[RMDB]
RNA sequence: GGGAACGACUCGAGUAGAGUCGAAAACUAUGAGCCAUCUUGCUGCCUUCCGUGCUGACUCCUCUAGCCUACCUACAAGAAUGACGCGAAACAUACCGCGUUUCUCCCAUUUUGCGGGAGGGUGCGGCGUAGUGCUGCAUUUCGAUGCAGCACUACGAAAAGAAACAACAACAACAAC
Reactivity to DMS in 0.01 (KOAc 150mM, MgCl2 10mM, bicine 150mM(pH8.5), 24C), signal-to-noise 2, nucleotides 027 to 126: c050u010a030u020g010a130g000c020c090a050u000c070u000u030g030c050u000g010c010c020u000u000c030c050g000u000g000c060u000g020a080c070u010c020c010u000c040u000a070g030c020c040u000a110c040c010u010a070c140a040a120g010a080a060u000g040a040c070g000c090g010a120a090a080c180a090u000a190c050c010g010c020g020u000u000u010c010u000c010c010c010a250u000u010u010u030g020c210g010g010g000a030g000g000g010u000g030c000g000g010
Reactivity to 2A3 in 0.01 (KOAc 150mM, MgCl2 10mM, bicine 150mM(pH8.5), 24C), signal-to-noise 2, nucleotides 027 to 126: c020u060a120u160g030a000g050c000c020a030u020c050u080u070g030c040u040g010c050c060u050u000c030c010g000u040g050c090u020g020a040c020u030c000c000u000c000u020a030g000c000c000u030a060c010c010u020a050c030a070a070g110a010a090u170g030a020c020g040c040g090a110a010a040c050a040u100a040c020c000g010c000g010u020u060u010c010u000c000c000c000a080u160u230u190u280g180c150g000g000g000a010g000g020g030u050g000c020g000g090
Notes:
An RNA of 177 nucleotides, treated with DMS and 2A3 and read out base by base. Conditions: 150 mM KOAc, 10 mM MgCl2 and 150 mM bicine (pH 8.5), 24 C. Values cover nucleotides 27 to 126. Reactivities are rounded to 0.1 and cut off at 0 and 3. For DMS, 1,718 sequencing reads were counted.